[RMDB]
RNA sequence: GGGAACGACUCGAGUAGAGUCGAAAACCUAUCCAAAAUGAGAACCCAUCUUGCACACUGUGCUAAUUUGAGAUUCUCAUGCCUCCUACUUGGAGAGAUCUGGACUAGAAGUCAGGGCAUCUGACUCAAUACAUUCGUCAGUUCGCUGACGAAUGAAGCAUGUGUAUGGGUUCGCCCAUACACAUGCAAAAGAAACAACAACAACAAC
Reactivity to DMS in 0.01 (KOAc 150mM, MgCl2 10mM, bicine 150mM(pH8.5), 24C), signal-to-noise 2, nucleotides 027 to 156: c000c010u010a090u000c030c040a030a030a140a080u000g000a040g000a000a060c020c000c000a020u000c130u000u010g030c000a010c020a210c160u010g040u000g050c020u000a010a020u000u000u010g000a120g000a060u000u000c010u010c000a030u010g000c050c010u000c000c000u000a140c230u020u010g000g000a050g020a160g020a070u000c070u000g000g020a160c150u000a120g010a070a030g010u000c000a020g030g020g000c200a140u010c000u010g000a030c000u000c020a040a120u000a140c000a030u000u000c010g020u010c000a010g000u000u010c300g030c020u000g020a020c000g000a000a010u000g010a140a180
Reactivity to 2A3 in 0.01 (KOAc 150mM, MgCl2 10mM, bicine 150mM(pH8.5), 24C), signal-to-noise 7, nucleotides 027 to 156: c000c000u010a070u030c020c010a050a020a040a090u010g000a000g000a010a000c000c020c000a010u010c020u010u030g000c010a020c050a080c170u300g000u010g020c080u180a080a100u000u010u020g130a130g020a080u010u000c000u000c000a000u020g030c000c000u020c000c010u110a290c130u180u250g020g000a010g000a010g010a040u050c080u100g000g000a020c030u080a080g020a130a010g070u000c000a000g050g040g240c070a120u100c090u000g000a000c010u000c020a050a060u090a110c020a000u000u000c000g000u000c000a010g010u010u110c140g020c100u000g000a000c000g000a000a000u000g000a020a000